[RMDB]
RNA sequence: GGGAACGACUCGAGUAGAGUCGAAAAGUACGAUUUUUCGAAAUCGUACGAAGGUCAGGUGGCAGCACCACGACACUGGACGCGGCGACCGAGCCGAACAGAAUAUGUGUAAUUUCGAUUACACAAAACUUACAUGUGUAUUCGUACACAUGUAAGUAAAAGAAACAACAACAACAAC
Reactivity to 2A3 in 0.01 (KOAc 150mM, MgCl2 10mM, bicine 150mM(pH8.5), 24C), signal-to-noise 9, nucleotides 027 to 126: g000u000a000c000g000a000u000u010u000u030u130c120g070a010a000a010u000c010g000u000a000c000g010a100a010g040g010u070c050a020g040g010u030g090g000c030a030g020c010a020c010c020a020c050g090a020c040a050c070u040g010g020a070c070g010c010g050g000c010g030a030c030c020g000a040g020c010c020g010a020a010c020a030g220a150a050u230a100u140g010u000g000u000a000a010u010u070u120c230g060a020u010u020a010c000a000c000a010a070a010
Reactivity to DMS in 0.01 (KOAc 150mM, MgCl2 10mM, bicine 150mM(pH8.5), 24C), signal-to-noise 9, nucleotides 027 to 126: g010u000a000c000g000a010u000u000u010u000u030c160g020a010a010a000u000c000g010u000a010c000g010a090a080g010g010u010c030a170g010g020u000g000g020c060a050g020c020a200c010c010a040c150g010a120c210a090c220u000g000g010a070c130g020c020g000g020c010g000a070c040c030g010a250g000c010c000g000a070a100c150a070g010a110a090u010a070u000g010u000g000u000a010a010u000u000u010c200g010a020u000u000a010c000a000c000a030a050a080

The data come from the RNA Mapping Database (RMDB), library M2PK50. An RNA of 177 nucleotides, treated with 2A3 and DMS and read out base by base. 2A3 adducts were read by reverse transcription with SuperScript II with manganese. Reactivities are rounded to 0.1 and cut off at 0 and 3. For DMS, 15,829 sequencing reads were counted. Reactivities are given for positions 27 through 126.